[RMDB]
RNA sequence: GGGAACGACUCGAGUAGAGUCGAAAACUCAGUAUUACGGAGUCAUCACUGGUGGUUCGCCUCAGAAUCUGACCGAGCUGAUUAACUUGGCGCUGGAGAACCAGAAGUUAGACGCUGAGAAGGCUAAACAUUAUUGUCAAUUCGUUGACAAUAAUGUAAAAGAAACAACAACAACAAC
Reactivity to 2A3 in 0.01 (KOAc 150mM, MgCl2 10mM, bicine 150mM(pH8.5), 24C), signal-to-noise 9, nucleotides 027 to 126: c010u010c010a010g040u050a070u200u110a100c150g090g050a050g030u020c020a060u050c020a130c040u050g080g030u040g010g020u120u020c020g060c040c020u070c020a030g050a090a130u080c080u120g110a220c010c030g010a020g000c030u060g100a190u210u130a070a050c020u010u030g020g000c030g010c040u030g020g020a070g020a070a030c000c000a020g020a060a000g010u010u060a030g010a030c030g000c010u010g020a020g030a110a040g110g010c080u090a110a090
Reactivity to DMS in 0.01 (KOAc 150mM, MgCl2 10mM, bicine 150mM(pH8.5), 24C), signal-to-noise 9, nucleotides 027 to 126: c010u000c010a060g010u020a060u030u010a150c140g010g010a060g010u010c020a050u010c100a060c040u000g010g010u000g010g010u000u010c030g000c120c030u020c050a060g000a100a070u020c110u020g010a110c030c030g000a060g020c020u000g010a130u020u040a060a100c070u000u000g000g010c040g010c030u010g000g000a160g000a060a070c030c010a030g000a170a050g000u000u010a080g010a090c220g010c010u000g000a040g010a110a080g000g010c040u000a080a130
Notes:
An RNA of 177 nucleotides, treated with 2A3 and DMS and read out base by base. For 2A3, 30,403 sequencing reads were counted. It was measured as part of the RMDB library OK1LIB. The DMS profile rests on 44,036 reads. Reactivities are given for positions 27 through 126.